RNA sequence: GGGAACGACUCGAGUAGAGUCGAAAAAUACACCGUAAUCGAGCGGAGGAAAACGGCACUCCGAAAAUCCGGUACGAUUAUGAUCCCACUGCGUCGACGCUAGAUGCAGAACCGGAUUGCCGAGGAAUGUUUCUAAAAUAUUCGUAUUUUAGAAACAAAAAGAAACAACAACAACAAC
Reactivity to DMS in 0.01 (KOAc 150mM, MgCl2 10mM, bicine 150mM(pH8.5), 24C), signal-to-noise 7, nucleotides 027 to 126: a070u000a090c120a130c070c010g020u000a090a070u000c040g010a120g010c020g010g000a050g000g000a060a050a100a120c020g010g020c050a070c080u010c020c000g000a050a070a030a040u000c000c000g000g000u010a110c110g010a090u010u010a050u000g000a080u000c010c010c010a300c010u000g010c000g020u000c010g010a120c260g020c220u010a060g010a010u000g000c000a010g000a110a060c050c000g010g000a030u000u000g010c040c020g010a120g010g010a090a100
Reactivity to 2A3 in 0.01 (KOAc 150mM, MgCl2 10mM, bicine 150mM(pH8.5), 24C), signal-to-noise 5, nucleotides 027 to 126: a000u130a030c050a030c020c030g050u060a050a110u120c050g010a030g090c020g020g030a020g010g030a090a180a030a070c020g010g000c020a010c030u020c000c010g010a060a030a010a020u000c000c000g020g030u050a070c090g040a060u100u090a060u250g090a030u050c010c000c000a030c020u010g000c000g010u000c020g030a090c110g050c300u120a040g000a030u000g000c010a010g030a040a010c010c000g000g010a020u000u040g000c000c000g010a030g030g120a140a110